RNA sequence: GGGAACGACUCGAGUAGAGUCGAAAAGCCCGCGCCCGGGCGUUGCGCCGAUGACGACGCCCCCGUGGGAUACCAAGGCUCCCAAAGAAAAUGUCAUCGCUGGCAAGCCGGCGGCUGGGUGCACGGCGCUCGGGAUAGCGUUCGCGCUAUCCCGAGCAAAAGAAACAACAACAACAAC
Reactivity to 2A3 in 0.01 (KOAc 150mM, MgCl2 10mM, bicine 150mM(pH8.5), 24C), signal-to-noise 1, nucleotides 027 to 126: g020c000c000c000g040c010g010c000c010c010g020g030g040c010g040u000u010g050c070g030c000c070g130a110u020g040a000c040g000a010c010g010c000c000c000c030c010g070u080g000g020g020a010u080a040c000c050a010a040g090g030c050u050c090c000c010a000a170a000g150a010a040a040a000u170g020u040c010a000u050c060g040c150u130g100g020c050a100a010g030c080c010g030g000c010g050g050c040u060g020g020g010u000g000c000a050c120g140g000c060